[RMDB]
RNA sequence: GGGAACGACUCGAGUAGAGUCGAAAACGCACGGACGAGGUGCUGUCCGAGAACAUCAUGUACAGCUCGCGGGCGUCCACGUCGGUGUUCGUGGGCCAGCCCAUCGUCUCCAGGAAAGAGAUGCGCGCCGACGCCGUCACAUUCGAGAUAGAUCACGACAUCUCGCAGAAUUCGUUCUGCGAGAUGUAAAAGAAACAACAACAACAAC
Reactivity to 2A3 in 0.01 (KOAc 150mM, MgCl2 10mM, bicine 150mM(pH8.5), 24C), signal-to-noise 2, nucleotides 027 to 156: c040g040c010a000c030g020g020a040c010g030a000g110g040u110g030c040u030g020u000c010c040g000a020g010a020a030c010a050u080c000a010u070g050u160a020c020a010g020c030u030c000g020c090g040g030g000c010g000u030c040c000a050c040g170u190c100g020g060u010g030u190u180c030g030u090g050g000g000c060c030a040g000c030c000c000a120u030c030g000u020c000u080c100c020a070g050g110a080a120a000g060a000g000a020u070g060c000g000c000g040c070c030g040a030c030g060c100c020g050u050c020a050c020a170u100u090c060g020a020g010a070u140a070g080a060u240c100a060c070g050